[RMDB]
The record gives the reactivity of an RNA of 207 nucleotides to 2A3. For 2A3 the reverse transcriptase was SuperScript II with manganese. Conditions: 150 mM KOAc, 10 mM MgCl2 and 150 mM bicine (pH 8.5), 24 C.

RNA sequence: GGGAACGACUCGAGUAGAGUCGAAAACUCAACAGUUACAAUCACAUGGGACAAGGAAUACAUCAUGCCACCUCAUCACUACUGACCUCGCUAAUGGCAGAACUGUUUGAAGAACUAGUGAUAGACUACUUUAAAAGGCAUCUACCACAACUCACUGCUCGCUGUAGGUUUUCGAACCUACAGCGAGAAAAGAAACAACAACAACAAC
Reactivity to 2A3 in 0.01 (KOAc 150mM, MgCl2 10mM, bicine 150mM(pH8.5), 24C), signal-to-noise 1, nucleotides 027 to 156: c010u030c020a000a040c020a010g050u010u080a040c030a080a110u090c070a200c020a190u070g030g030g010a040c120a120a070g000g000a000a040u070a080c050a180u070c050a030u120g090c060c000a000c010c010u000c020a000u040c010a010c100u070a040c040u120g180a300c000c000u020c010g040c080u110a100a070u100g040g000c000a020g040a070a080c000u050g000u110u070u190g050a050a010g000a060a000c070u080a050g010u040g000a060u000a050g040a000c010u000a070c000u300u300u140a120a140a000a000g020g000c060a000u020c000u000a070c000c030a040c080a060a000c060u080c040a010c030u060g000